[RMDB]
RNA sequence: GGGAACGACUCGAGUAGAGUCGAAAAUGAUCGUGAAGAGAACACUAGCUGAUCUACUUAUACCGAUAAAUAGGCAGAUAUCAGACAUUCAAAGCACUCUAAGCGAAGUAACAACAAGAGUCCAUGAGCUUACUCUGUCGUUCGCGACAGAGUAAGCAAAAGAAACAACAACAACAAC
Reactivity to DMS in 0.01 (KOAc 150mM, MgCl2 10mM, bicine 150mM(pH8.5), 24C), signal-to-noise 1, nucleotides 027 to 126: u020g000a230u090c000g020u040g000a300a030g010a070g070a050a020c180a050c140u000a080g000c090u000g000a020u000c000u020a050c050u000u000a080u000a030c170c300g000a100u000a000a180a000u000a000g000g000c000a080g040a020u060a000u090c060a050g140a080c120a090u130u000c150a000a060a050g090c300a060c070u000c000u020a060a300g060c010g000a000a260g000u000a150a020c130a220a030c080a050a050g000a150g000u000c000c140a030u020g000a000
Reactivity to 2A3 in 0.01 (KOAc 150mM, MgCl2 10mM, bicine 150mM(pH8.5), 24C), signal-to-noise 2, nucleotides 027 to 126: u060g050a070u010c010g000u050g040a050a020g000a030g020a050a090c040a030c070u010a010g040c000u000g010a010u020c000u000a010c000u010u010a000u050a090c060c050g130a080u060a260a240a000u050a010g010g000c030a000g000a050u110a040u140c030a000g140a160c020a030u180u170c040a040a190a000g100c020a050c020u000c000u010a040a040g040c000g030a000a000g060u140a170a030c150a000a030c090a000a090g060a020g090u070c030c000a000u030g010a040